Annotation
Structure probing data (DMS and 2A3) for a 207-nucleotide construct. For 2A3, 2,513 sequencing reads were counted. DMS adducts were read by reverse transcription with MarathonRT. For 2A3 the reverse transcriptase was SuperScript II with manganese. The RNA was probed in 150 mM KOAc, 10 mM MgCl2 and 150 mM bicine (pH 8.5) at 24 C.

[RMDB]
RNA sequence: GGGAACGACUCGAGUAGAGUCGAAAAUGGUUUUGGGUGCAUGGUACGGUUCUGGAAAAAAGGGUGGCUUCUUGUCUACAUUUUUGAUGGGAUGUCUCGACACAAACCGAAACGUUUGGACGACAGUAACAAAGGUGCACACAGGCCACACGGACGAGCACUACUGUAUUUUCGAAUACAGUAGUGCAAAAGAAACAACAACAACAAC
Reactivity to DMS in 0.01 (KOAc 150mM, MgCl2 10mM, bicine 150mM(pH8.5), 24C), signal-to-noise 1, nucleotides 027 to 156: u000g000g040u000u000u000u000g020g000g050u000g000c040a090u010g020g010u000a100c070g070g000u000u000c000u000g000g000a010a030a050a070a090a120g020g010g030u000g030g000c040u000u000c080u000u000g060u010c010u000a090c070a140u000u020u000u000u010g000a270u010g010g000g010a080u000g040u000c010u000c040g010a140c060a070c070a020a030a100c030c070g010a080a100a110c120g000u000u000u000g010g000a110c000g000a050c010a070g010u000a060a080c020a050a060a080g020g010u000g000c000a040c040a070c060a070g020g000c030c000a050c020a140c090g030g040a100c090g010a200
Reactivity to 2A3 in 0.01 (KOAc 150mM, MgCl2 10mM, bicine 150mM(pH8.5), 24C), signal-to-noise 4, nucleotides 027 to 156: u080g000g020u040u140u090u040g020g000g010u020g000c020a020u040g060g030u130a000c070g010g010u030u040c030u070g050g090a100a000a000a000a000a030g080g030g010u030g000g000c030u030u010c020u030u050g010u010c010u060a110c050a300u110u140u080u080u130g020a030u030g020g010g010a020u030g000u030c030u020c050g090a040c020a000c010a110a040a000c020c020g070a060a030a040c090g040u030u030u040g020g010a030c040g030a020c030a050g030u110a040a000c020a030a060a000g090g000u010g020c010a010c000a000c000a010g000g000c010c000a030c000a010c030g050g040a030c050g030a030